[RMDB]
RNA sequence: GGGAACGACUCGAGUAGAGUCGAAAACUUACGUGGUUCGCCACGUAAGAAAGUGGAAGAGGAGCGAUGAACCCACACAAAACAAGACAUCGAAAAAUAAAUAAACACGCUGCUUCGGCAGCGUGAAGCCUAUCUAACUGUUCGCAGUUAGAUAGGCAAAAGAAACAACAACAACAAC
Reactivity to 2A3 in 0.01 (KOAc 150mM, MgCl2 10mM, bicine 150mM(pH8.5), 24C), signal-to-noise 2, nucleotides 027 to 126: c000u000u000a000c000g000u000g000g010u050u040c090g050c030c000a000c000g020u020a000a000g010a010a040a000g070u060g050g030a070a050g040a100g140g060a090g080c030g010a020u020g020a070a090c020c030c010a000c010a000c000a020a110a040a020c070a030a000g110a040c020a040u050c050g070a090a050a030a010a000u220a010a110a030u150a080a120a010c000a000c000g020c000u030g000c000u020u030c270g060g000c020a020g000c000g000u000g000a000a000
Reactivity to DMS in 0.01 (KOAc 150mM, MgCl2 10mM, bicine 150mM(pH8.5), 24C), signal-to-noise 1, nucleotides 027 to 126: c020u000u000a020c000g020u000g000g010u000u010c180g000c020c000a000c010g000u020a000a000g020a040a040a080g020u010g010g000a070a070g050a090g020g030a160g030c050g010a030u000g000a130a040c080c000c000a050c020a030c130a020a080a080a030c120a060a060g000a080c060a020u000c010g040a030a180a090a040a060u020a040a060a080u010a070a090a230c000a000c000g030c000u000g000c000u000u030c170g010g000c010a010g000c000g010u000g000a030a100
Record summary:
Chemical mapping of a 177-nucleotide RNA with 2A3 and DMS. 2A3 adducts were read by reverse transcription with SuperScript II with manganese. It was measured as part of the RMDB library M2PK50. For DMS the reverse transcriptase was MarathonRT.